[RMDB]
RNA sequence: GGGAACGACUCGAGUAGAGUCGAAAAUUAGUUGGCUCGCAUUUGCUGCUAUCAACAACUGUCAGCCGGUUAUUCGAGCGCAGCUUUAUGCUAGUAUUGUCCUCUCCGGUGGAAAUGUCUCGUUUCCAGGGUAUCAUAUCUUCGGAUAUGAUACCCUAAAAGAAACAACAACAACAAC
Reactivity to DMS in 0.01 (KOAc 150mM, MgCl2 10mM, bicine 150mM(pH8.5), 24C), signal-to-noise 2, nucleotides 027 to 126: u020u010a070g010u000u030g000g000c010u000c070g030c080a050u000u000u070g000c030u010g020c040u000a130u000c030a140a060c120a060a070c240u000g000u010c130a090g010c150c100g000g030u000u010a040u010u010c170g010a030g000c110g010c010a000g000c140u010u000u010a010u000g000c030u010a030g000u020a070u040u000g030u000c010c000u010c050u000c040c060g000g000u010g010g000a020a080a070u010g040u000c110u000c230g000u000u000u000c010c010
Reactivity to 2A3 in 0.01 (KOAc 150mM, MgCl2 10mM, bicine 150mM(pH8.5), 24C), signal-to-noise 2, nucleotides 027 to 126: u160u110a030g090u020u070g030g000c000u000c010g040c020a000u000u000u100g000c010u020g000c000u020a020u110c040a030a040c030a040a020c030u060g030u130c040a060g040c040c000g000g040u030u060a050u080u110c070g000a000g030c050g000c050a000g000c000u070u080u060a090u040g000c010u030a020g020u000a150u060u280g040u050c020c000u000c030u000c010c030g050g030u050g010g090a060a050a000u100g050u040c050u030c110g020u000u000u000c000c000